Structure probing data (DMS) for a 177-nucleotide construct. It was measured as part of the RMDB library M2PK90.

RNA sequence: GGGAACGACUCGAGUAGAGUCGAAAAUUACUAGUCUGUGAUGAAUUGCUUUGACUACUGACACCUCGUAUGAAAACUGCACGUGCAGUCUGAUUAUUUAGCAAGACUGAGGCUUAAAAUAAAUCAACAAUGGGCGUUAUUUCGAUAACGCCCAUUGAAAAGAAACAACAACAACAAC
Reactivity to DMS in 0.01 (KOAc 150mM, MgCl2 10mM, bicine 150mM(pH8.5), 24C), signal-to-noise 2, nucleotides 027 to 126: u010u010a100c100u000a030g000u000c060u010g030u010g020a090u000g000a050a150u000u000g000c010u010u000u030g000a060c030u000a040c070u000g020a140c030a020c030c110u020c120g030u000a020u030g000a030a090a130a070c180u010g010c030a060c300g020u020g000c010a040g010u000c120u000g030a080u000u000a030u000u000u000a010g040c050a020a050g020a160c060u000g000a090g000g000c070u000u010a050a030a060a050u000a050a050a100u000c110a020a120
Description: The reactions ran in a buffer of 150 mM KOAc, 10 mM MgCl2 and 150 mM bicine (pH 8.5), at 24 C. For DMS, 1,068 sequencing reads were counted. For DMS the reverse transcriptase was MarathonRT.